[RMDB]
RNA sequence: GGGAACGACUCGAGUAGAGUCGAAAACAUUACGAAUUCAGUCGCAAAUUGUAGAAUUACCUACUCUACGAUUUAGUGAGCGUUAGUAACGUUGUAAUAUAAUAUAGUCUUUGGAAGGAUUAUAUUGGAGCCGCGGACAAGUUCGCUUGUCCGCGAACGAAGGCAUAUCCUUCGGGAUAUGCCUUCGAAAAGAAACAACAACAACAAC
Reactivity to 2A3 in 0.01 (KOAc 150mM, MgCl2 10mM, bicine 150mM(pH8.5), 24C), signal-to-noise 1, nucleotides 027 to 156: c040a020u220u300a060c050g050a130a160u110u130c070a010g070u100c000g000c000a000a000a000u000u010g000u000a000g000a030a060u180u130a210c000c040u080a070c020u000c000u000a000c010g030a000u000u000u080a060g020u010g070a010g080c060g050u080u120a050g030u060a080a000c000g000u010u010g020u020a090a090u060a080u040a130a000u040a010u000a000g000u020c040u030u160u120g280g030a100a110g030g000a050u000u000a000u010a000u020u000g070g090a060g110c000c040g000c000g000g050a000c010a010a010g020u050u130c190g010c170u010u000g000u000c000c000g000c000g000a000a000